Chemical mapping of a 177-nucleotide RNA with 2A3 and DMS. The DMS profile rests on 895 reads. The reactions ran in a buffer of 150 mM KOAc, 10 mM MgCl2 and 150 mM bicine (pH 8.5), at 24 C. DMS (dimethyl sulfate) methylates the pairing face of unpaired adenines and cytosines.
[RMDB]
RNA sequence: GGGAACGACUCGAGUAGAGUCGAAAACCGCACAGCACCAUGUGUGGCGCAUCGCUGACAAGCGCAACUACGGAAUCGGCCACGUUGAGGACUAUAUCGGCGACUUCGAAGGGCUUGACCAGCUCACGACCUACCACAGGUUCGCCUGUGGUAGGUCAAAAGAAACAACAACAACAAC
Reactivity to 2A3 in 0.01 (KOAc 150mM, MgCl2 10mM, bicine 150mM(pH8.5), 24C), signal-to-noise 2, nucleotides 027 to 126: c020c010g000c000a000c010a000g070c080a060c060c130a200u080g000u000g000u010g050g000c020g010c030a090u090c030g010c030u030g010a030c000a050a030g000c030g000c090a030a030c020u100a030c030g020g030a060a070u030c070g100g000c030c030a040c030g040u050u090g110a070g000g110a060c090u120a070u030a020u300c050g010g000c010g040a040c020u040u020c010g030a090a080g020g030g000c010u000u040g050a090c010c030a010g000c000u030c020a070c030
Reactivity to DMS in 0.01 (KOAc 150mM, MgCl2 10mM, bicine 150mM(pH8.5), 24C), signal-to-noise 2, nucleotides 027 to 126: c010c010g000c100a020c040a080g010c160a140c090c120a010u000g020u000g020u000g010g040c060g000c300a190u000c060g020c010u000g000a080c110a060a010g000c010g000c110a090a100c040u000a050c080g010g000a110a040u010c040g000g010c000c030a150c100g000u040u000g000a120g000g020a100c100u010a020u000a110u010c000g010g000c030g020a010c170u010u030c030g020a110a160g000g000g010c020u000u000g010a020c030c030a080g010c000u020c040a200c190